[RMDB]
RNA sequence: GGGAACGACUCGAGUAGAGUCGAAAAGCUGGCCGAUGCGCAGUCCGCCGGCUGCUACGCUGUCAUCGCCCCCCAGAUGGGCAAACAGGUGGUGGCAUUCCAGGCAGCGAUGGAGAUUUUGGCGGAGUCAUAAAACGCCAUUCGUGGCGUUUUAUGAAAAAGAAACAACAACAACAAC
Reactivity to DMS in 0.01 (KOAc 150mM, MgCl2 10mM, bicine 150mM(pH8.5), 24C), signal-to-noise 4, nucleotides 027 to 126: g020c030u000g020g010c020c060g000a110u010g010c100g010c130a120g010u000c010c030g000c010c010g010g010c020u000g010c020u000a140c080g020c180u000g010u000c040a060u000c140g020c000c000c060c010c050c100a140g010a090u010g000g000g030c170a030a060a060c150a050g020g000u000g020g030u010g010g000c010a090u000u010c050c100a140g010g010c020a030g030c030g000a140u000g010g010a120g010a150u000u000u000u000g020g020c000g000g000a120g010
Reactivity to 2A3 in 0.01 (KOAc 150mM, MgCl2 10mM, bicine 150mM(pH8.5), 24C), signal-to-noise 1, nucleotides 027 to 126: g010c030u060g050g030c060c030g190a170u140g010c100g000c040a030g120u000c000c010g000c000c040g010g000c000u000g000c020u020a040c070g030c070u010g000u030c010a070u110c030g020c010c000c000c010c000c000a060g110a300u230g000g010g000c050a040a070a010c010a040g000g020u020g000g020u000g040g030c020a020u160u000c010c010a010g080g010c020a000g000c000g030a020u050g120g010a090g020a040u000u230u210u250g000g000c000g040g000a010g000